Source: RMDB library TTRDEL, as collected in RNAgym. An RNA of 177 nucleotides, treated with 2A3 and DMS and read out base by base.
RNA sequence: GGGAACGACUCGAGUAGAGUCGAAAAGAUAUGGAGUCUUCGCUAGAUCGAUCGGUCGGAAACGACCGUGAGAUCUUGGACCGAGAGACUCCUAAGUCAAACUGUAAAGUGUUCGCACUUUACAGAAGUAGGAUUAGCAGUUCGCUGCUAAUCCUACAAAAGAAACAACAACAACAAC
Reactivity to 2A3 in 0.01 (KOAc 150mM, MgCl2 10mM, bicine 150mM(pH8.5), 24C), signal-to-noise 1, nucleotides 027 to 126: g030a010u080a010u140g000g000a010g010u000c000u020u010c020g000c030u010a000g010a000u000c010g030a010u010c010g000g040u000c000g050g020a060a090a070c000g000a010c000c000g010u000g010a010g000a000u020c000u000u000g010g020a050c100c050g100a160g010a010g000a280c000u000c020c010u010a100a000g040u010c070a070a060a100c000u000g000u010a020a020a020g000u010g040u050u120c250g040c130a000c000u050u000u000a000c010a010g000a030a030
Reactivity to DMS in 0.01 (KOAc 150mM, MgCl2 10mM, bicine 150mM(pH8.5), 24C), signal-to-noise 2, nucleotides 027 to 126: g010a030u000a300u000g000g000a010g020u000c000u010u020c020g000c030u010a010g010a010u000c000g000a240u000c010g010g000u000c000g010g000a090a110a240c000g000a000c000c000g010u000g010a300g000a010u000c000u000u010g010g000a120c300c030g000a050g010a040g060a000c010u000c000c000u000a010a070g000u000c030a130a140a190c000u000g010u000a000a010a020g010u000g010u010u020c260g020c010a000c000u000u030u000a000c000a020g040a020a100
DMS adducts were read by reverse transcription with MarathonRT. The DMS profile rests on 1,271 reads.